An RNA of 177 nucleotides, treated with 2A3 and DMS and read out base by base. Source: RMDB library TTRDEL, as collected in RNAgym. 2A3 adducts were read by reverse transcription with SuperScript II with manganese. Values are in units of 0.01, from 0 to 300, in steps of 10.
RNA sequence: GGGAACGACUCGAGUAGAGUCGAAAAGAUAUGGAGUUCUCCGAUUGAGCAACAGCUCGGAAACGAGACAUGCUUAGAGGAGAGACUCCUAAGUCAAAAGGUUACGUUACUUCGGUAACGUAACCAACAUCUCUAUCGGCUUCGGCCGAUAGAGAUGAAAAGAAACAACAACAACAAC
Reactivity to 2A3 in 0.01 (KOAc 150mM, MgCl2 10mM, bicine 150mM(pH8.5), 24C), signal-to-noise 1, nucleotides 027 to 126: g010a030u060a030u140g000g000a020g000u040u000c010u020c000c030g220a300u150u300g020a030g000c000a000a120c040a140g120c010u000c020g000g000a040a060a050c010g010a000g000a060c040a110u110g000c000u110u180a060g010a020g050g000a000g020a000g070a000c000u060c000c000u000a070a000g040u010c030a000a050a140a070g000g000u000u020a000c010g010u010u010a010c020u030u110c260g030g010u000a000a000c000g000u010a000a000c000c000a000a000
Reactivity to DMS in 0.01 (KOAc 150mM, MgCl2 10mM, bicine 150mM(pH8.5), 24C), signal-to-noise 2, nucleotides 027 to 126: g000a020u000a300u010g010g000a010g010u010u000c000u000c000c000g000a300u010u010g040a000g030c020a040a070c200a150g010c000u000c000g010g000a070a120a190c000g000a000g000a050c110a200u000g000c000u000u000a010g000a300g010g000a020g000a080g010a010c000u000c000c000u000a000a050g020u000c040a050a050a110a050g020g000u000u000a010c000g010u000u000a000c000u000u020c230g050g030u000a000a000c000g010u000a000a000c000c000a010a060
Values cover nucleotides 27 to 126.